[RMDB]
RNA sequence: GGGAACGACUCGAGUAGAGUCGAAAAAUGGCGAGGGCAAUGAUGCGGUUGAGAUUGCUACAACCCGUCCAGAAACAAUGCUGGGAGACGUAGCUAUUGCUGUUCAUCCUGAGGAUGAAAGAUAUCACGAUGGGACUGCAUUCGUGCAGUCCCAUCGAAAAGAAACAACAACAACAAC
Reactivity to DMS in 0.01 (KOAc 150mM, MgCl2 10mM, bicine 150mM(pH8.5), 24C), signal-to-noise 1, nucleotides 027 to 126: a110u010g010g010c010g000a170g020g010g000c100a050a010u010g000a060u000g020c040g030g040u000u000g020a110g020a140u000u000g020c020u000a080c000a030a050c070c010c010g020u000c010c070a040g000a140a020a070c300a170a120u010g000c010u000g000g010g010a080g010a120c240g000u000a110g000c030u000a080u000u000g080c020u000g040u000u000c030a070u010c000c020u020g000a120g070g030a030u020g000a040a060a060g010a110u000a080u000c230a190
Description
Conditions: 150 mM KOAc, 10 mM MgCl2 and 150 mM bicine (pH 8.5), 24 C. Chemical mapping of a 177-nucleotide RNA with DMS. The data come from the RNA Mapping Database (RMDB), library OK2TST.